Source: RMDB library OK1LIB, as collected in RNAgym. The record gives the reactivity of an RNA of 177 nucleotides to DMS and 2A3. The reactions ran in a buffer of 150 mM KOAc, 10 mM MgCl2 and 150 mM bicine (pH 8.5), at 24 C. DMS adducts were read by reverse transcription with MarathonRT.
RNA sequence: GGGAACGACUCGAGUAGAGUCGAAAAGCAGCAGCACCAAGACAGGAAAGAGGAUAAGCAAGCGCAUCGGCACUUCACGGGUGCAGCGCAGGUGCAGGCGGCGAACAUUUCCAGUAGGGCAGAAGACGACCUAUACCAUGUUCGCAUGGUAUAGGUCAAAAGAAACAACAACAACAAC
Reactivity to DMS in 0.01 (KOAc 150mM, MgCl2 10mM, bicine 150mM(pH8.5), 24C), signal-to-noise 5, nucleotides 027 to 126: g000c070a100g010c000a110g050c020a040c000c020a140a140g020a100c230a070g000g060a070a080a110g030a070g000g000a070u050a090a140g030c110a100a050g000c040g000c010a090u030c150g000g010c010a020c010u020u030c180a120c210g020g000g020u000g000c020a080g000c050g010c020a050g000g030u000g020c030a070g020g000c000g030g000c000g020a060a080c160a080u020u010u000c030c010a060g010u030a050g000g000g000c070a050g000a130a090g010a130c130
Reactivity to 2A3 in 0.01 (KOAc 150mM, MgCl2 10mM, bicine 150mM(pH8.5), 24C), signal-to-noise 8, nucleotides 027 to 126: g040c040a000g000c000a000g010c010a010c010c010a050a050g100a090c080a050g100g140a060a080a020g120a040g090g050a080u100a190a060g050c080a080a070g000c010g000c040a080u130c100g140g000c020a010c030u150u100c080a050c180g130g000g000u020g000c020a010g000c010g000c010a010g050g000u030g010c010a010g110g010c030g030g010c010g010a030a000c020a070u050u060u020c010c010a030g040u070a040g040g030g000c050a030g040a170a000g060a040c130